Chemical mapping of a 207-nucleotide RNA with DMS and 2A3. It was measured as part of the RMDB library ARCHII. For DMS the reverse transcriptase was MarathonRT. The RNA was probed in 150 mM KOAc, 10 mM MgCl2 and 150 mM bicine (pH 8.5) at 24 C. For DMS, 3,024 sequencing reads were counted.

RNA sequence: GGGAACGACUCGAGUAGAGUCGAAAACGUGACCCGAUUCGGAUUGCUUGUGUCUGAUGACAGGUCUUAUUAUUAGCAAGCUACGGUAGAAUCUUGUCUAGUGAUUUUACAAGAGAUUGAUAGACUCGCUUGAUUUGGGCUUGAGUUAUGUGUCAAAGUUAUUUAUCAGCUUCGGCUGAUAAAUAACAAAAGAAACAACAACAACAAC
Reactivity to DMS in 0.01 (KOAc 150mM, MgCl2 10mM, bicine 150mM(pH8.5), 24C), signal-to-noise 2, nucleotides 027 to 156: c070g050u000g000a190c000c020c000g000a300u000u000c000g020g000a090u000u010g000c050u030u000g000u000g030u010c010u000g050a040u000g000a280c300a030g000g000u000c030u010u000a030u010u000a180u010u010a050g040c000a030a050g010c010u000a230c050g050g020u010a040g000a050a070u000c000u010u000g010u010c080u000a090g010u000g010a110u000u000u000u010a060c060a040a160g000a190g000a110u000u000g010a120u000a130g000a060c000u000c070g010c020u020u010g020a140u000u000u000g000g020g030c000u000u000g000a120g020u010u000a050u000g020u010g020u000c030a050a090a270
Reactivity to 2A3 in 0.01 (KOAc 150mM, MgCl2 10mM, bicine 150mM(pH8.5), 24C), signal-to-noise 2, nucleotides 027 to 156: c020g040u080g050a020c000c010c010g020a020u040u020c000g020g010a000u000u090g020c020u010u040g010u010g000u050c000u010g000a020u000g000a020c020a050g000g000u000c020u040u030a060u030u040a050u020u160a010g000c000a000a000g000c000u030a010c020g080g000u020a000g040a020a000u030c030u080u210g070u060c000u020a020g010u000g070a020u020u010u030u090a010c010a050a020g000a020g010a050u020u280g070a060u070a060g010a010c010u010c060g030c030u020u040g090a200u230u120u150g080g010g010c030u030u110g000a020g030u070u080a090u140g060u010g020u040c040a090a040a040